[RMDB]
RNA sequence: GGGAACGACUCGAGUAGAGUCGAAAACUAAACAGGGUUUUCACCCUUCCUUUAGUUUCCUUCCUCUCCUGGAGAGGUCUUCUGCCCUAGCCCGGUCUUCGAAGCUUCCUUUGGCUACUACCCGGUGGUAAUGGACAUAGUUCGCUAUGUCCAUUACAAAAGAAACAACAACAACAAC
Reactivity to DMS in 0.01 (KOAc 150mM, MgCl2 10mM, bicine 150mM(pH8.5), 24C), signal-to-noise 4, nucleotides 027 to 126: c010u000a000a010a010c200a010g000g010g010u000u010u000u010c220a080c000c000c000u010u010c050c030u010u000u000a010g000u000u010u000c050c020u000u010c020c010u000c030u000c020c070u000g020g000a060g020a060g010g010u000c030u010u000c060u000g000c030c010c040u000a120g020c030c040c030g030g000u000c040u000u000c050g010a090a160g010c050u010u000c060c040u000u000u000g010g010c030u000a060c060u000a110c050c010c010g000g030u000g010
Reactivity to 2A3 in 0.01 (KOAc 150mM, MgCl2 10mM, bicine 150mM(pH8.5), 24C), signal-to-noise 3, nucleotides 027 to 126: c010u010a000a010a030c300a230g040g010g010u120u170u280u300c150a050c000c000c000u010u040c000c010u010u010u000a010g010u000u020u080c010c000u060u110c000c000u010c000u020c010c090u110g010g100a060g000a010g070g010u010c030u090u000c020u030g030c000c000c020u020a040g000c010c000c000g060g000u030c050u080u050c070g040a040a010g010c010u050u070c010c000u060u070u080g050g010c010u030a070c000u030a050c050c020c000g060g030u080g090